Source: RMDB library OK1LIB, as collected in RNAgym. This 177-nucleotide RNA was probed chemically with 2A3 and DMS. Reactivities are given for positions 27 through 126. DMS adducts were read by reverse transcription with MarathonRT.
RNA sequence: GGGAACGACUCGAGUAGAGUCGAAAAAUGCAUGACAGUCUUCUUCACAUUCUUUUACUGAUACAGGUUUUCUGUUGUUUAUCUGAACAGCAUCAAUCGGACAGACAUAUUCGCAGGCACCGCAUAACAGUGUAAUGGGAUUCGUCCCAUUACACUGAAAAGAAACAACAACAACAAC
Reactivity to 2A3 in 0.01 (KOAc 150mM, MgCl2 10mM, bicine 150mM(pH8.5), 24C), signal-to-noise 7, nucleotides 027 to 126: a000u100g030c060a030u090g040a060c020a060g010u020c020u050u000c000u040u050c030a020c020a150u050u060c070u010u120u040u110a090c070u070g050a080u070a200c050a100g000g070u040u040u020u080c050u040g030u010u020g010u010u050u020a080u030c020u020g030a050a020c010a010g040c010a030u050c040a050a110u060c040g020g020a020c020a030g040a010c000a040u120a060u020u050c030g000c020a000g000g040c020a020c030c020g010c060a050u090a180a060
Reactivity to DMS in 0.01 (KOAc 150mM, MgCl2 10mM, bicine 150mM(pH8.5), 24C), signal-to-noise 4, nucleotides 027 to 126: a050u020g000c050a080u030g010a090c110a070g000u010c040u020u000c030u010u020c060a070c070a080u010u020c050u020u010u010u010a090c080u010g000a110u000a140c090a080g000g000u000u000u010u010c060u010g000u000u010g010u000u000u010a060u040c050u000g000a070a110c090a060g000c040a080u000c120a010a040u020c090g020g000a060c040a030g000a070c130a050u020a090u010u000c060g000c050a040g020g000c040a040c040c000g020c080a060u010a070a180